[RMDB]
RNA sequence: GGGAACGACUCGAGUAGAGUCGAAAAAGCCAUACCAUUACGAUGGUAUGGCAAGUCCGUGACGGCGAUGGAUCGCGCCUGGCCGAUGCCGAACUGCCGAUCUGGCUGAUGGUUCCUGCCCCGUCAAAAAACGUAAAGCACUUCGGUGCUUUACGAAGCGAAAUGUUUACUUCGGUAAACAUUUCGCAAAAGAAACAACAACAACAAC
Reactivity to 2A3 in 0.01 (KOAc 150mM, MgCl2 10mM, bicine 150mM(pH8.5), 24C), signal-to-noise 1, nucleotides 027 to 156: a000g000c000c000a000u000a000c010c000a010u080u000a050c300g180a040u000g000g000u000a000u000g000g000c000a000a010g010u020c030c030g050u050g030a070c020g030g020c030g030a030u060g040g010a050u050c020g020c030g000c100c070u060g020g030c020c000g020a030u080g090c050c020g060a170a040c090u140g010c010c030g030a070u040c040u050g020g010c020u060g030a130u130g050g080u010u090c010c000u050g040c000c000c000c020g040u020c030a000a000a000a050a000a090c020g010u010a000a000a000g000c000a000c020u000u150c190g060g000u000g000c000u000u000u000a000c000g000a010a000
Chemical mapping of a 207-nucleotide RNA with 2A3. The reactions ran in a buffer of 150 mM KOAc, 10 mM MgCl2 and 150 mM bicine (pH 8.5), at 24 C. For 2A3, 1,051 sequencing reads were counted. The data come from the RNA Mapping Database (RMDB), library M2RFPK.